[RMDB]
RNA sequence: GGGAACGACUCGAGUAGAGUCGAAAAAUAAAACUGCGAAGGGGGGACGGAGAAGGCUAUGUUGGCCGGGCGACGGUUGUCCCGGUUUAAGCGUGUACGCUGGUUUUCCAGGCAAAGAAAAAAAAAAUCCUAAUCUACAGUUCGCUGUAGAUUAGGAAAAAGAAACAACAACAACAAC
Reactivity to DMS in 0.01 (KOAc 150mM, MgCl2 10mM, bicine 150mM(pH8.5), 24C), signal-to-noise 1, nucleotides 027 to 126: a160u010a010a010a040a020c140u000g030c060g000a120a090g000g060g010g020g000g010a040c100g000g000a030g020a090a070g000g020c050u010a040u010g000u010u010g010g010c020c020g000g000g000c300g020a070c150g000g000u020u020g010u030c020c000c000g000g000u000u000u020a050a090g020c040g000u000g010u000a090c150g020c020u000g020g000u000u000u000u000c030c000a180g020g020c050a050a020a060g000a000a010a000a000a000a000a130a030a130a190
The record gives the reactivity of an RNA of 177 nucleotides to DMS. Values cover nucleotides 27 to 126. For DMS the reverse transcriptase was MarathonRT.